The record gives the reactivity of an RNA of 177 nucleotides to DMS and 2A3.
RNA sequence: GGGAACGACUCGAGUAGAGUCGAAAAAUACAGUACGAAAGUACAAAGAAGCAAUCAAACCGAGCAGUGAAAUGAUGGCUUCAGUCCAAAAUGGGCAAACACUGCAGACGGAGGCAAAGGCAAAUAACCCUUAAGGGAGAUUCGUCUCCCUUAAGGGAAAAGAAACAACAACAACAAC
Reactivity to DMS in 0.01 (KOAc 150mM, MgCl2 10mM, bicine 150mM(pH8.5), 24C), signal-to-noise 4, nucleotides 027 to 126: a060u010a100c170a160g020u000a010c000g000a100a090a220g020u000a020c000a080a060a100g000a070a020g010c010a080a040u000c020a060a090a130c050c020g010a120g000c030a040g020u000g000a090a070a080u010g000a070u000g010g000c010u000u010c050a080g010u000c010c010a050a040a080a060u000g020g000g040c040a070a070a120c030a010c020u000g010c010a070g010a100c080g030g000a130g000g020c090a040a040a050g000g010c070a020a080a040u000a080a180
Reactivity to 2A3 in 0.01 (KOAc 150mM, MgCl2 10mM, bicine 150mM(pH8.5), 24C), signal-to-noise 2, nucleotides 027 to 126: a000u190a020c050a010g010u000a010c010g060a120a050a030g010u010a020c010a000a110a000g040a040a020g030c020a000a040u070c020a050a040a070c010c020g020a010g030c020a010g010u040g070a060a100a190u120g050a020u070g040g020c010u080u050c100a020g040u020c000c000a010a120a040a270u140g020g010g020c000a000a020a020c020a010c030u010g000c010a010g030a020c040g000g020a010g010g000c040a100a030a000g050g000c020a050a000a110u090a120a130
The reactions ran in a buffer of 150 mM KOAc, 10 mM MgCl2 and 150 mM bicine (pH 8.5), at 24 C. As a SHAPE reagent, 2A3 marks flexible, mostly unpaired nucleotides at the ribose 2'-OH. For DMS the reverse transcriptase was MarathonRT.